[RMDB]
RNA sequence: GGGAACGACUCGAGUAGAGUCGAAAAGGCAAAGAUAGGAUGCGUGACUCUUUAGGCUACUUGUUUACGGCUUUUGAUCAGACUGACGCAGAUGUCAGUAUCUAUUGCUUAGAUAAGAAAUGGGAAGACCCUCCUUCUCAUUCGUGAGAAGGAGGGUAAAAGAAACAACAACAACAAC
Reactivity to 2A3 in 0.01 (KOAc 150mM, MgCl2 10mM, bicine 150mM(pH8.5), 24C), signal-to-noise 1, nucleotides 027 to 126: g100g020c040a040a050a070g100a060u080a030g100g070a020u040g080c020g010u060g100a050c010u010c000u030u110u130a030g050g010c010u010a020c030u040u020g040u080u000u030a060c020g030g010c030u110u110u000u100g060a050u070c080a030g030a090c000u010g000a000c010g010c120a120g030a300u230g040u000c000a000g020u000a000u000c010u000a090u060u040g000c030u030u070a000g010a050u030a080a020g090a040a080a090u140g030g020g010a000a090g020
Reactivity to DMS in 0.01 (KOAc 150mM, MgCl2 10mM, bicine 150mM(pH8.5), 24C), signal-to-noise 2, nucleotides 027 to 126: g000g030c040a020a060a090g000a130u010a060g000g020a040u000g000c060g010u000g000a070c110u000c060u000u000u000a090g010g000c030u000a110c090u000u000g010u000u000u010a080c230g000g010c040u010u010u010u000g000a030u020c160a130g010a080c060u000g000a020c030g020c120a150g020a140u000g010u000c010a020g010u020a010u000c030u000a060u000u010g010c050u000u010a080g000a030u020a020a040g020a060a090a100u000g040g000g000a040a100g000
Structure probing data (2A3 and DMS) for a 177-nucleotide construct. DMS adducts were read by reverse transcription with MarathonRT. For 2A3 the reverse transcriptase was SuperScript II with manganese. Values cover nucleotides 27 to 126.